RNA sequence: GGGAACGACUCGAGUAGAGUCGAAAACUCCCAGGGGGUCGCCCAGGAAUGGCGGGACCCCACUUCAUCAGGGUCCGCGUUCCAUCCUUUCUUACCUGAUGGCCGGCAUGGUCCCAGCCUCCUCGCUGCAUGUAUAGGAGUUCGCUCCUAUACAUGCAAAAGAAACAACAACAACAAC
Reactivity to 2A3 in 0.01 (KOAc 150mM, MgCl2 10mM, bicine 150mM(pH8.5), 24C), signal-to-noise 1, nucleotides 027 to 126: c000u030c010c000c000a000g000g070g000g000g000u000c000g080c000c020c030a010g090g050a110a040u200g300g200c030g000g030g040a040c000c000c000c000a030c050u140u140c010a240u050c040a040g040g000g000u040c030c030g060c010g070u060u040c000c020a020u090c030c000u150u140u070c030u060u080a170c030c000u060g040a030u130g030g000c030c020g050g030c080a060u080g050g000u030c000c000c000a060g040c020c000u000c010c020u000c010g090c080u050
Record summary: This 177-nucleotide RNA was probed chemically with 2A3.